[RMDB]
RNA sequence: GGGAACGACUCGAGUAGAGUCGAAAACGCUGGGAUUAUUGGCACUCCUCAAAUACAGGUGGGAGCUUACUGAAGCGCGCACGGUAAGCGAAGAACACCUGUAUUUGAGUAGUGCAGGAUCCUGUGCUGAAGCGCGCACGGCAACCGAAAGGUGCGAGUUAUGAAACAACUUCGGUUGUUUCAUAACAAAAGAAACAACAACAACAAC
Reactivity to DMS in 0.01 (KOAc 150mM, MgCl2 10mM, bicine 150mM(pH8.5), 24C), signal-to-noise 2, nucleotides 027 to 156: c090g030c010u000g020g000g010a020u000u000a120u010u010g010g010c010a010c010u000c090c010u010c010a030a040a020u000a010c030a030g010g020u000g000g000g000a110g040c030u000u000a010c010u020g000a040a020g030c040g050c000g000c000a300c000g020g020u020a020a020g010c000g000a110a180g000a110a210c020a010c010c000u020g020u000a000u010u010u010g010a030g000u000a010g000u000g000c000a030g010g000a040u010c000c000u010g000u000g050c000u000g010a100a040g010c040g000c010g010c020a300c020g000g000c000a080a100c030c030g000a070a080a170g020g020u000g000c000g000a220
Reactivity to 2A3 in 0.01 (KOAc 150mM, MgCl2 10mM, bicine 150mM(pH8.5), 24C), signal-to-noise 5, nucleotides 027 to 156: c030g000c010u050g010g010g000a020u050u080a180u300u300g210g000c000a000c000u040c010c000u000c010a000a000a000u000a000c000a020g000g000u000g000g010g000a000g000c000u000u000a000c000u030g050a220a100g000c010g000c000g000c000a010c020g010g010u000a010a000g010c020g100a240a010g000a010a000c000a000c000c010u000g000u000a010u000u000u000g000a000g000u000a000g000u000g000c000a010g010g000a000u000c000c000u040g040u020g010c000u030g030a110a030g000c010g000c010g000c010a020c010g000g000c010a020a020c010c010g040a080a040a030g030g000u030g020c010g010a080